The record gives the reactivity of an RNA of 207 nucleotides to 2A3 and DMS. The reactions ran in a buffer of 150 mM KOAc, 10 mM MgCl2 and 150 mM bicine (pH 8.5), at 24 C. The DMS profile rests on 22,489 reads.
[RMDB]
RNA sequence: GGGAACGACUCGAGUAGAGUCGAAAAUAGGCGAACGAGAGGCCCUCUCAUGUGCGGAGUUGUCACGCUGACACAAUUGUUAUGAUGUCCGAUUCCGGUAGCAUCGCGGCGAUGUUUUCAUAGGACAUCUUAUGAACCCAAGCGCUUCGGGGAAGCACAUAUGAUAGUGAUUCGUCACUAUCAUAUGAAAAGAAACAACAACAACAAC
Reactivity to 2A3 in 0.01 (KOAc 150mM, MgCl2 10mM, bicine 150mM(pH8.5), 24C), signal-to-noise 7, nucleotides 027 to 156: u130a020g020g000c020g000a040a020c040g010a060g010a030g160g030c020c030c020u000c010u010c020a090u120g030u060g040c040g020g010a060g030u070u070g030u090c030a030c100g020c060u090g060a020c010a010c010a100a180u080u080g060u090u100a080u160g020a010u000g020u000c010c010g030a050u130u030c050c020g060g040u070a010g010c010a010u010c030g020c090g220g000c090g030a010u020g030u020u090u040u050c050a050u090a040g000g000a020c000a020u000c000u010u020a070u040g040a020a030c020c000c000a050a050g060c040g000c030u040u080c050g050g000g000g020a020a010g020c020a010
Reactivity to DMS in 0.01 (KOAc 150mM, MgCl2 10mM, bicine 150mM(pH8.5), 24C), signal-to-noise 6, nucleotides 027 to 156: u000a090g010g010c010g020a080a090c060g010a120g010a130g020g020c000c030c040u000c050u000c060a100u000g010u000g020c030g020g010a150g000u010u010g010u000c040a100c070g020c030u000g010a120c050a050c060a090a170u000u010g010u000u000a100u010g010a050u000g020u000c000c010g000a230u000u000c080c040g020g000u000a060g010c020a030u000c020g030c090g000g010c090g010a030u000g010u000u000u000u000c050a070u000a120g010g010a040c050a030u000c010u010u000a060u000g010a080a120c040c020c040a060a090g010c050g020c030u000u000c040g020g020g030g010a070a070g010c040a110
Values cover nucleotides 27 to 156. 2A3 adducts were read by reverse transcription with SuperScript II with manganese.